[RMDB]
This 207-nucleotide RNA was probed chemically with 2A3 and DMS. It was measured as part of the RMDB library RNAMAK. The RNA was probed in 150 mM KOAc, 10 mM MgCl2 and 150 mM bicine (pH 8.5) at 24 C. The 2A3 profile rests on 1,664 reads. Reactivities are rounded to 0.1 and cut off at 0 and 3. The DMS profile rests on 1,830 reads. For DMS the reverse transcriptase was MarathonRT. DMS (dimethyl sulfate) methylates the pairing face of unpaired adenines and cytosines. Values cover nucleotides 27 to 156.
RNA sequence: GGGAACGACUCGAGUAGAGUCGAAAAUCCUAAGUCGAGCCAGCAUAGCUUGGAUUUAUCUCCCAGAGUAUGGUCGGAAACGACCAUACGACGAAGGGAGAUUGUCAGCUAUGUGAGGCUCGAUAUGGAAAAAGACGGAAGCUUCGGCUUCCGUCAACAUUGAUCUCUCGUUCGCGAGAGAUCAAUGAAAAGAAACAACAACAACAAC
Reactivity to 2A3 in 0.01 (KOAc 150mM, MgCl2 10mM, bicine 150mM(pH8.5), 24C), signal-to-noise 2, nucleotides 027 to 156: u000c000c000u030a130a000g030u030c010g000a000g000c000c000a000g000c000a030u000a000g000c000u050u170g160g030a080u220u270u090a020u010c000u000c000c000c000a010g010a000g000u000a000u000g000g020u000c020g010g050a090a060a090c000g020a000c000c010a010u000a000c000g000a040c030g040a040a010g010g000g000a010g000a000u000u000g010u000c000a010g000c000u000a000u010g000u000g000a030g000g000c000u000c000g010a000u000a010u030g000g010a110a090a010a030a070g010a010c000g000g020a000a000g000c030u060u160c280g150g000c000u000u010c010c030g000u000c000a000a000
Reactivity to DMS in 0.01 (KOAc 150mM, MgCl2 10mM, bicine 150mM(pH8.5), 24C), signal-to-noise 1, nucleotides 027 to 156: u020c020c000u000a070a220g020u000c010g000a000g020c000c010a300g000c030a000u000a030g040c010u010u050g020g020a050u000u000u000a000u000c000u000c000c000c000a140g030a300g000u000a000u020g010g000u000c000g040g000a270a150a290c030g020a010c000c000a010u000a000c000g000a160c100g040a110a210g030g000g050a010g000a000u020u020g000u000c000a010g040c020u010a020u020g000u010g000a180g070g000c010u000c040g000a020u000a030u000g000g000a050a080a160a140a110g000a050c020g000g000a020a020g040c020u030u000c300g070g000c000u000u020c000c000g000u000c010a020a150